RNA sequence: GGGAACGACUCGAGUAGAGUCGAAAACAGAGAUUUGCAACACUAAACAGUAUGAUGAGGCAACUUAGUGGGAUAGGACUCACACGAUUGGAUAUGAUGAAUCCAUCCGCAACUGAACUGAGGCUCUGCUAUAAUAUAGUUGAAACUUUGCUCCAUGUCACACUUAGGCUUUCGAGCCUAAGUGUGAAAAAGAAACAACAACAACAAC
Reactivity to 2A3 in 0.01 (KOAc 150mM, MgCl2 10mM, bicine 150mM(pH8.5), 24C), signal-to-noise 2, nucleotides 027 to 156: c040a000g070a000g040a050u040u060u090g030c030a040a000c020a040c080u110a160a150a040c000a030g100u120a120u080g130a090u070g060a030g060g000c000a080a050c070u050u100a000g020u060g010g050g000a010u020a090g080g000a030c020u000c010a020c020a000c040g160a110u060u200g140g050a010u040a110u280g150a070u050g020a070a010u000c000c010a000u000c000c020g010c040a080a080c050u080g080a120a050c020u000g020a020g030g020c000u000c010u060g010c030u060a020u050a220a110u160a070u080a040g010u000u040g020a090a120a070c030u050u030u090g040c000u000c040c020a140u150g030
Annotation: Chemical mapping of a 207-nucleotide RNA with 2A3. Conditions: 150 mM KOAc, 10 mM MgCl2 and 150 mM bicine (pH 8.5), 24 C. Reactivities are rounded to 0.1 and cut off at 0 and 3. Values cover nucleotides 27 to 156. The 2A3 profile rests on 840 reads. 2A3 adducts were read by reverse transcription with SuperScript II with manganese. As a SHAPE reagent, 2A3 marks flexible, mostly unpaired nucleotides at the ribose 2'-OH. The data come from the RNA Mapping Database (RMDB), library OK3TST.